[RMDB]
RNA sequence: GGGAACGACUCGAGUAGAGUCGAAAAGGUGCACAGGUCAGAGCCUCUGUGAUAUGUGGGUGUUUAUUGUCUGUAUUUGAGUCCUGGCCAAGGAAACAGAAACAGUGACCUGGUGUUGAACAUCCAAAUCCCUGGAUAUAUUCGUAUAUCCAGGGAUAAAAGAAACAACAACAACAAC
Reactivity to 2A3 in 0.01 (KOAc 150mM, MgCl2 10mM, bicine 150mM(pH8.5), 24C), signal-to-noise 4, nucleotides 027 to 126: g050g000u070g010c010a010c000a020g010g020u020c010a020g020a020g150c010c000u030c020u070g090u060g120a060u060a080u260g090u120g020g020g010u060g070u080u180u070a150u080u150g070u040c020u020g030u030a140u040u060u080g030a030g010u010c020c000u060g070g080c050c020a010a010g020g010a020a030a020c010a010g050a010a050a010c020a020g030u020g020a010c010c020u040g050g000u030g020u030u100g010a030a020c010a050u030c010c000a040a070
Reactivity to DMS in 0.01 (KOAc 150mM, MgCl2 10mM, bicine 150mM(pH8.5), 24C), signal-to-noise 9, nucleotides 027 to 126: g010g020u010g000c030a050c030a020g010g000u010c020a100g010a210g010c030c020u000c030u000g010u010g010a230u010a080u010g010u010g010g010g010u000g010u000u000u010a070u020u010g010u010c020u000g010u000a080u000u000u010g010a110g000u000c000c010u000g000g020c190c220a080a040g010g010a040a060a050c020a030g000a060a060a040c040a030g020u010g000a040c040c020u000g010g020u000g010u000u000g000a050a080c080a080u000c010c020a060a130
Chemical mapping of a 177-nucleotide RNA with 2A3 and DMS. The reactions ran in a buffer of 150 mM KOAc, 10 mM MgCl2 and 150 mM bicine (pH 8.5), at 24 C. For 2A3 the reverse transcriptase was SuperScript II with manganese. For DMS, 22,575 sequencing reads were counted.